RNA sequence: GGGAACGACUCGAGUAGAGUCGAAAAGAUAUGGACUAAGACAUGGCUUAACGUCGGAAACGACGUCCAGCCAACAGCUUAGGUCCUAAGUCAAACCACAUCCCAAUGUUCGCAUUGGGAUGUGGAACAAGACAAGCCCGUUCGCGGGCUUGUCUUGAAAAGAAACAACAACAACAAC
Reactivity to DMS in 0.01 (KOAc 150mM, MgCl2 10mM, bicine 150mM(pH8.5), 24C), signal-to-noise 1, nucleotides 027 to 126: g020a080u000a290u000g000g000a130c000u000a010a030g030a140c020a300u000g010g000c000u040u010a040a020c000g010u010c010g010g000a080a090a250c000g010a050c010g000u010c090c300a040g000c000c000a010a060c300a090g040c000u000u000a030g010g010u020c000c000u000a040a080g020u000c040a080a140a200c000c000a000c000a000u030c000c000c000a000a000u000g000u000u000c300g070c000a000u000u010g040g020g000a000u000g000u010g000g000a060a050